[RMDB]
RNA sequence: GGGAACGACUCGAGUAGAGUCGAAAAAAUCUCGCACUUGCACAAACUUAUAUUGCACUGCAGUAUGGGUCGGGGCGGGAAUGCGAGCCGGGUUCGGACAUGUACCGCCGUGCCCUUUCGCAUGCCAGACGCUAAGAAAUUUCGAUUUCUUAGCGUCAAAAGAAACAACAACAACAAC
Reactivity to 2A3 in 0.01 (KOAc 150mM, MgCl2 10mM, bicine 150mM(pH8.5), 24C), signal-to-noise 9, nucleotides 027 to 126: a000a000u030c020u000c010g000c010a300c060u050u140g020c100a040c050a120a120a010c040u040u030a020u020a030u040u030g010c110a120c300u270g000c010a010g010u020a020u030g010g020g030u040c040g030g010g010g020c010g000g000g010a020a010u020g000c010g000a000g060c050c040g010g000g000u000u030c010g000g050a100c050a130u260g110u180a110c050c120g000c000c000g000u010g000c000c000c000u010u080u000c010g000c000a000u020g010c000c000a010
Reactivity to DMS in 0.01 (KOAc 150mM, MgCl2 10mM, bicine 150mM(pH8.5), 24C), signal-to-noise 4, nucleotides 027 to 126: a070a050u010c010u000c000g010c030a110c030u010u010g010c200a120c180a080a070a040c060u000u010a040u000a020u010u000g020c010a140c240u040g010c000a020g010u000a030u000g000g000g000u000c120g010g000g010g010c030g000g000g000a060a020u010g000c010g000a010g010c130c180g010g000g020u000u010c030g000g000a080c100a100u010g000u000a080c160c190g000c030c000g000u000g010c000c000c000u010u010u000c020g000c010a010u000g000c040c020a150